[RMDB]
RNA sequence: GGGAACGACUCGAGUAGAGUCGAAAAGCAGUUCCAGAGUGUGUGGACUCUGAAAACUCGGGGUCAGUCGUCCAACCACAUGGACGUGAAGUGAUUAAGAGAGUGAUCACACUGACGACGUACUCGCUUAUGUCCUAUCCCGAGGAACUGGAUAGGCCACUAGGAUCAUCUUCGGAUGAUCCUAGUGAAAAGAAACAACAACAACAAC
Reactivity to 2A3 in 0.01 (KOAc 150mM, MgCl2 10mM, bicine 150mM(pH8.5), 24C), signal-to-noise 6, nucleotides 027 to 156: g050c000a010g000u030u000c020c010a010g010a010g010u120g000u040g030u050g050g030a020c000u000c010u010g050a030a030a050a060c020u010c000g010g000g030g000u010c010a000g010u020c000g010u000c010c010a050a060c030c020a040c010a060u010g000g010a000c010g000u040g110a040a010g000u000g010a000u030u130a180a040g160a040g040a030g220u090g050a000u000c000a000c000a000c000u000g000a000c040g000a000c000g010u030a020c040u090c230g070c060u070u050a030u090g020u020c020c020u040a070u080c000c000c000g010a040g020g000a030a010c010u010g010g030a080u100a090g110g000c020
Reactivity to DMS in 0.01 (KOAc 150mM, MgCl2 10mM, bicine 150mM(pH8.5), 24C), signal-to-noise 3, nucleotides 027 to 156: g050c030a050g020u010u000c020c020a040g000a070g000u000g040u020g010u000g030g010a300c000u000c000u000g030a060a040a060a180c040u000c000g040g030g000g020u000c020a040g000u000c050g030u000c000c000a000a100c020c070a060c100a170u000g000g020a010c000g020u010g000a130a130g000u000g010a120u000u000a120a110g000a160g000a140g020u000g000a040u000c000a110c030a170c040u010g010a080c070g020a050c030g040u000a080c080u010c040g010c030u000u000a070u000g010u000c010c080u000a070u000c020c010c010g000a070g040g030a020a030c030u000g020g000a080u000a090g020g010c120